[RMDB]
This 177-nucleotide RNA was probed chemically with 2A3 and DMS. The RNA was probed in 150 mM KOAc, 10 mM MgCl2 and 150 mM bicine (pH 8.5) at 24 C. For 2A3, 35,226 sequencing reads were counted. Source: RMDB library OK1LIB, as collected in RNAgym.
RNA sequence: GGGAACGACUCGAGUAGAGUCGAAAAGAAUCUGACAAAUAAUGACAAGAAUGACUGUGAAUAUGUUGUUAAUUGUCAGUUAUGGAUGUUCGGUGUCUUAUUCACAGUCACAGAUCAGACAUCGGAGGAUAGUAGUCAAUUUCGAUUGAUUGCUAUCAAAAGAAACAACAACAACAAC
Reactivity to 2A3 in 0.01 (KOAc 150mM, MgCl2 10mM, bicine 150mM(pH8.5), 24C), signal-to-noise 9, nucleotides 027 to 126: g060a010a060u060c000u000g000a000c000a010a040a000u050a010a010u040g020a000c030a040a080g190a160a160u170g020a050c010u010g010u030g050a070a040u190a150u280g010u010u000g000u000u010a030a050u040u010g000u000c000a000g010u030u040a130u110g170g040a060u130g070u090u030c000g000g000u000g000u000c000u020u060a040u050u060c030a020c010a040g010u040c030a020c040a060g120a040u100c020a000g000a000c000a000u000c000g010g010a020g060
Reactivity to DMS in 0.01 (KOAc 150mM, MgCl2 10mM, bicine 150mM(pH8.5), 24C), signal-to-noise 9, nucleotides 027 to 126: g010a120a080u030c010u000g010a020c010a010a030a080u000a020a010u000g000a030c020a110a150g010a140a110u040g010a020c010u010g000u000g000a030a060u010a090u030g010u000u000g000u000u010a020a060u000u000g010u000c000a030g000u010u020a060u030g010g010a120u020g010u000u000c000g010g000u000g000u000c010u000u010a050u010u010c010a010c010a000g010u010c040a120c230a090g000a120u020c150a030g000a000c000a000u000c000g010g000a040g000